Structure probing data (DMS and 2A3) for a 177-nucleotide construct. For DMS, 1,221 sequencing reads were counted. For DMS the reverse transcriptase was MarathonRT. The RNA was probed in 150 mM KOAc, 10 mM MgCl2 and 150 mM bicine (pH 8.5) at 24 C. For 2A3 the reverse transcriptase was SuperScript II with manganese.

RNA sequence: GGGAACGACUCGAGUAGAGUCGAAAAGGCCUGACCCUCUUGCUGCAAUCGGCUAUGUCACACCUCUCUUUAUGGUGCUUGUAGGAUUUGGAAACGGUAUCGGUGCAGGUGCAACCUCACUUAUCACACGUGGAUACGGGUUCGCCCGUAUCCACGUAAAAGAAACAACAACAACAAC
Reactivity to DMS in 0.01 (KOAc 150mM, MgCl2 10mM, bicine 150mM(pH8.5), 24C), signal-to-noise 1, nucleotides 027 to 126: g000g000c020c000u000g000a130c210c020c000u000c000u000u000g000c110u020g000c110a140a030u000c000g000g000c100u000a050u020g000u040c110a050c140a090c050c010u000c100u000c080u000u060u020a060u010g060g050u000g110c080u000u000g000u040a050g000g000a110u050u000u020g010g000a070a070a040c000g000g050u000a000u050c040g040g010u010g010c050a000g080g040u020g080c010a000a150c050c040u020c010a130c030u020u000a090u020c000a020c230
Reactivity to 2A3 in 0.01 (KOAc 150mM, MgCl2 10mM, bicine 150mM(pH8.5), 24C), signal-to-noise 3, nucleotides 027 to 126: g070g020c000c000u020g010a110c000c000c000u050c010u030u110g060c040u040g000c000a030a210u060c030g050g000c030u080a080u100g060u010c000a040c020a070c060c000u060c000u000c020u040u060u190a110u060g010g000u030g000c030u040u110g030u090a080g000g100a230u050u050u100g090g000a100a110a010c090g030g000u070a040u100c040g000g000u060g030c060a020g030g000u020g020c010a010a220c000c000u040c000a050c020u100u070a070u160c020a060c010